Conditions: 150 mM KOAc, 10 mM MgCl2 and 150 mM bicine (pH 8.5), 24 C. This 177-nucleotide RNA was probed chemically with DMS and 2A3. For 2A3 the reverse transcriptase was SuperScript II with manganese. The data come from the RNA Mapping Database (RMDB), library OK2TST. For DMS, 3,496 sequencing reads were counted. For 2A3, 2,933 sequencing reads were counted.

RNA sequence: GGGAACGACUCGAGUAGAGUCGAAAAAAAUACAGCUCUUUCUAGCAAAAUCAGGCAGCUCUGCCCCAUCGGUAGGGGCACCGAUUAGUCUACUAACAGCCAGAGGUCCAUCUAGCAGGGUGCCGGGGAACUCAUACUUUUUCGAAAGUAUGAGUUCAAAAGAAACAACAACAACAAC
Reactivity to DMS in 0.01 (KOAc 150mM, MgCl2 10mM, bicine 150mM(pH8.5), 24C), signal-to-noise 3, nucleotides 027 to 126: a020a090a080u000a070c080a110g010c030u000c050u000u000u000c030u010a080g010c050a070a050a080a070u000c080a070g000g020c030a100g000c010u000c040u010g000c020c010c030c050a050u000c070g010g020u010a080g010g000g020g000c030a020c040c020g010a080u000u000a080g000u010c060u000a040c070u010a060a080c090a060g020c040c020a060g000a100g000g010u020c030c030a050u000c040u000a080g010c080a040g000g010g000u000g020c040c050g010g010g010
Reactivity to 2A3 in 0.01 (KOAc 150mM, MgCl2 10mM, bicine 150mM(pH8.5), 24C), signal-to-noise 2, nucleotides 027 to 126: a000a000a000u200a040c050a040g000c000u000c010u070u050u000c020u050a020g000c020a030a070a090a150u080c040a070g020g030c020a020g000c030u010c030u040g000c000c000c020c000a060u110c080g110g030u110a080g030g040g000g000c000a010c000c000g020a020u070u130a020g040u010c030u070a120c010u040a140a020c010a030g020c020c020a030g040a030g030g030u020c020c010a060u020c020u040a020g030c010a020g050g030g010u030g040c010c000g020g010g060